[RMDB]
RNA sequence: GGGAACGACUCGAGUAGAGUCGAAAAGUUCGCGGUCGAGGACUCAUUCGCGGGCGGAUUCAACAGCUACGACCGUUGGAACGUCCUCGAGAUCGGGAAGACGUUCGACAUUCGGACCGGCGGCUACGACUAUGAGACGAUUCGUCGUCUCAUAGUCAAAAGAAACAACAACAACAAC
Reactivity to DMS in 0.01 (KOAc 150mM, MgCl2 10mM, bicine 150mM(pH8.5), 24C), signal-to-noise 4, nucleotides 027 to 126: g010u010u000c010g030c090g010g010u000c010g020a080g010g000a110c090u010c100a170u000u000c010g020c110g010g000g000c020g000g010a190u010u000c070a050a050c120a050g020c070u010a140c150g000a070c030c040g010u000u000g020g010a010a040c110g000u000c000c000u000c010g000a050g020a050u000c090g000g000g010a100a110g000a080c090g010u000u010c020g000a090c070a170u010u000c040g030g000a070c010c050g020g020c060g010g010c040u000a070c140
Reactivity to 2A3 in 0.01 (KOAc 150mM, MgCl2 10mM, bicine 150mM(pH8.5), 24C), signal-to-noise 3, nucleotides 027 to 126: g060u070u090c020g000c030g080g010u030c030g010a040g030g040a030c010u030c100a080u110u040c010g000c030g020g000g000c020g000g000a050u070u090c040a070a070c010a080g040c030u180a070c100g100a120c010c020g020u050u050g010g010a000a010c010g000u020c000c020u000c010g040a070g020a110u130c040g000g030g020a000a070g070a030c000g010u050u040c010g030a040c050a200u120u050c030g020g040a050c020c030g070g000c030g020g000c040u070a040c080
Conditions: 150 mM KOAc, 10 mM MgCl2 and 150 mM bicine (pH 8.5), 24 C. Structure probing data (DMS and 2A3) for a 177-nucleotide construct. The 2A3 profile rests on 4,548 reads. For 2A3 the reverse transcriptase was SuperScript II with manganese. The data come from the RNA Mapping Database (RMDB), library OK2TST.